[RMDB]
RNA sequence: GGGAACGACUCGAGUAGAGUCGAAAACGCUGGAACACAUAGAAGUGAGAAUGCCGGUAUGAGUAGCGAAAGACAGGUGAGAAUCCUGUCCACCGUAAGACUAAGGUUUCCAGGGGAAGGCUCGUCCCAUGCAGGUUCUAUUCGUAGAACCUGCAUGAAAAGAAACAACAACAACAAC
Reactivity to DMS in 0.01 (KOAc 150mM, MgCl2 10mM, bicine 150mM(pH8.5), 24C), signal-to-noise 4, nucleotides 027 to 126: c080g030c030u010g000g020a050a060c070a030c050a150u000a110g000a090a100g010u000g020a140g010a110a110u010g000c020c030g020g010u010a060u000g010a060g040u010a110g010c060g010a090a250a120g000a000c010a000g010g020u000g000a200g000a300a160u010c000c000u000g000u000c000c040a060c220c020g030u000a070a100g010a060c050u010a090a120g020g010u010u000u000c010c020a080g000g000g030g000a080a080g000g010c060u010c050g000u000c020c040
Reactivity to 2A3 in 0.01 (KOAc 150mM, MgCl2 10mM, bicine 150mM(pH8.5), 24C), signal-to-noise 2, nucleotides 027 to 126: c030g010c020u000g020g020a070a000c000a010c010a100u110a180g140a300a030g150u030g060a090g070a150a040u130g070c010c000g020g010u090a090u170g080a040g040u150a000g020c020g020a020a050a010g000a000c000a000g010g030u010g000a030g050a010a020u050c000c010u010g000u000c000c010a020c000c020g030u060a110a040g030a020c020u030a080a030g100g000u040u030u000c010c010a030g000g000g060g030a050a050g050g000c030u020c070g040u040c000c010